[RMDB]
RNA sequence: GGGAACGACUCGAGUAGAGUCGAAAAGAUAUGGACCUUGACUUUCAUCGAUCUAUACUCAGUACCGCCUAUAUCGGAAACGAUAUAGGCGGGAACUGUAUAGGGAGAAAGGAGAGGUCCUAAGUCACCUAACAUAAGUGUUCGCACUUAUGUUAGGAAAAGAAACAACAACAACAAC
Reactivity to 2A3 in 0.01 (KOAc 150mM, MgCl2 10mM, bicine 150mM(pH8.5), 24C), signal-to-noise 4, nucleotides 027 to 126: g030a030u080a080u180g020g000a000c000c000u010u030g060a040c040u090u040u060c100a300u300c100g060a020u000c020u000a010u000a010c030u030c040a000g020u020a060c010c000g000c000c010u000a000u000a000u000c020g030g050a160a070a060c010g000a000u010a000u000a000g000g010c010g000g010g000a010a000c010u010g000u000a000u010a000g000g010g000a040g010a000a010a000g010g000a030g000a010g000g000u000c000c000u000a000a010g000u020c010a020
Reactivity to DMS in 0.01 (KOAc 150mM, MgCl2 10mM, bicine 150mM(pH8.5), 24C), signal-to-noise 5, nucleotides 027 to 126: g000a060u010a300u010g010g000a020c000c000u000u000g000a300c010u000u010u000c010a300u010c230g010a080u010c010u000a000u000a000c000u000c020a080g000u000a190c000c000g000c000c000u010a010u000a010u000c000g000g000a140a120a250c000g010a010u000a000u000a000g000g010c000g020g000g010a010a070c100u000g000u000a000u000a010g000g020g010a030g010a010a010a000g010g010a300g000a010g010g000u000c000c000u000a010a070g000u000c050a300